[RMDB]
RNA sequence: GGGAACGACUCGAGUAGAGUCGAAAAGUCAGUCAACUAGACCUGCGCUCCCGAGCUAGUGACUGACAGAAAAGAGCUGCUCGGUCAGAACAAAUCUGACCUCGGGAGCGCAGGAGAGCAGCUCAAAGGAGUGAUAGUGAUUCGUCACUAUCACUCCAAAAGAAACAACAACAACAAC
Reactivity to DMS in 0.01 (KOAc 150mM, MgCl2 10mM, bicine 150mM(pH8.5), 24C), signal-to-noise 3, nucleotides 027 to 126: g000u000c000a050g000u020c030a060a160c170u030a100g000a170c110c010u010g000c000g010c000u000c000c000c030g000a110g000c110u010a090g000u010g000a090c000u010g000a000c000a080g050a070a060a070a140g000a020g010c010u000g020c000u010c060g000g000u000c030a000g000a220a140c260a030a130a130u040c030u010g030a060c010c000u020c070g000g010g010a020g000c000g000c010a000g000g000a050g040a000g000c000a030g000c000u000c000a120a090a140
Reactivity to 2A3 in 0.01 (KOAc 150mM, MgCl2 10mM, bicine 150mM(pH8.5), 24C), signal-to-noise 5, nucleotides 027 to 126: g040u010c020a010g010u010c030a060a010c120u110a070g110a200c020c030u010g000c000g010c010u010c010c010c020g020a050g030c110u130a010g050u000g070a070c000u000g000a010c000a000g060a010a110a010a010g010a000g010c010u020g010c010u040c050g020g000u010c010a000g010a070a050c100a060a090a120u020c030u090g070a120c020c000u020c000g010g000g000a010g000c000g000c000a010g000g000a000g000a000g010c000a000g010c000u020c020a070a090a010